The record gives the reactivity of an RNA of 207 nucleotides to 2A3 and DMS. The reactions ran in a buffer of 150 mM KOAc, 10 mM MgCl2 and 150 mM bicine (pH 8.5), at 24 C.

RNA sequence: GGGAACGACUCGAGUAGAGUCGAAAAACACCGAAAGGCACAAGACUUCGAACAUUAUAGCAGUUAGUAGUUGCCUAAACCCAUUGCAAUAUAUGGGACAGUAGAGGUCGCAAGCCUAUACUGUGCGAAAAGUCGCAAGGUUUCGACCUUGCGACAACAUUCCUAAAGGGUUCGCCCUUUAGGAAUGAAAAGAAACAACAACAACAAC
Reactivity to 2A3 in 0.01 (KOAc 150mM, MgCl2 10mM, bicine 150mM(pH8.5), 24C), signal-to-noise 4, nucleotides 027 to 156: a010c040a030c000c040g080a170a040a010g030g030c030a000c020a070a050g060a040c020u060u050c090g090a140a040c060a180u200u240a150u250a180g090c100a020g010u010u060a020g010u070a030g020u080u070g020c000c000u040a120a040a020c000c000c010a000u000u030g010c010a030a000u030a000u010a000u130g000g010g000a000c000a000g000u010a000g000a000g030g020u110c040g000c150a040a000g000c000c000u010a000u000a000c000u000g030u030g030c040g090a080a050a080a040g000u000c000g000c000a000a000g060g010u040u080u180c220g040a080c010c000u000u010g010c000g000a000c000a000a000
Reactivity to DMS in 0.01 (KOAc 150mM, MgCl2 10mM, bicine 150mM(pH8.5), 24C), signal-to-noise 2, nucleotides 027 to 156: a100c060a070c050c000g020a070a080a070g030g000c020a150c160a140a130g010a060c020u000u000c010g000a180a050c040a100u000u010a150u000a080g010c040a070g020u010u000a080g020u000a120g040u000u000g010c000c030u000a060a090a170c010c000c010a050u010u000g010c060a180a140u000a130u000a000u000g020g020g000a070c010a010g020u000a030g000a040g070g060u010c050g000c220a080a250g000c030c000u000a050u000a020c000u010g050u000g000c030g000a050a050a080a120g010u000c000g030c010a000a030g000g020u010u000u000c300g040a030c000c000u000u010g000c000g010a000c000a020a060